[RMDB]
An RNA of 177 nucleotides, treated with DMS and 2A3 and read out base by base.
It was measured as part of the RMDB library OK1LIB.
As a SHAPE reagent, 2A3 marks flexible, mostly unpaired nucleotides at the ribose 2'-OH.
For DMS, 4,001 sequencing reads were counted.
For 2A3, 3,102 sequencing reads were counted.
Values are in units of 0.01, from 0 to 300, in steps of 10.
DMS adducts were read by reverse transcription with MarathonRT.
RNA sequence: GGGAACGACUCGAGUAGAGUCGAAAAAUUGGGUCAGAUGAAUGUGAGCAUUGCAGUAGUGGUGAUGACAAGUUCACCUGGUUUUUCCUACCCAAGGGGAUAAGGCUAGAUAAUGAUCCGGCGUCCACUGGGGAAGGUUAUUCGUAACCUUCCCCAGAAAAGAAACAACAACAACAAC
Reactivity to DMS in 0.01 (KOAc 150mM, MgCl2 10mM, bicine 150mM(pH8.5), 24C), signal-to-noise 2, nucleotides 027 to 126: a110u040u020g020g010g030u000c020a010g020a050u020g010a020a000u000g000u010g010a110g030c040a010u000u000g000c020a080g000u050a110g010u050g010g080u010g010a040u010g000a030c020a060a150g020u000u000c000a010c040c020u000g000g000u020u000u010u040u000c010c010u010a110c040c050c030a080a020g020g030g010g010a060u000a060a120g000g030c050u000a010g010a070u030a090a100u060g020a110u000c020c040g000g010c060g000u000c020c000a150
Reactivity to 2A3 in 0.01 (KOAc 150mM, MgCl2 10mM, bicine 150mM(pH8.5), 24C), signal-to-noise 5, nucleotides 027 to 126: a000u090u080g030g010g010u040c020a020g040a120u030g080a120a000u090g080u090g110a130g080c030a050u040u030g000c040a040g120u300a030g130u130g150g030u070g040a040u020g030a040c030a110a060g010u000u020c000a010c010c000u000g000g020u040u010u030u080u020c010c010u010a070c000c000c020a040a040g070g040g010g000a020u030a120a040g060g010c020u030a040g020a060u070a110a090u170g090a040u000c010c020g000g010c020g040u000c000c020a010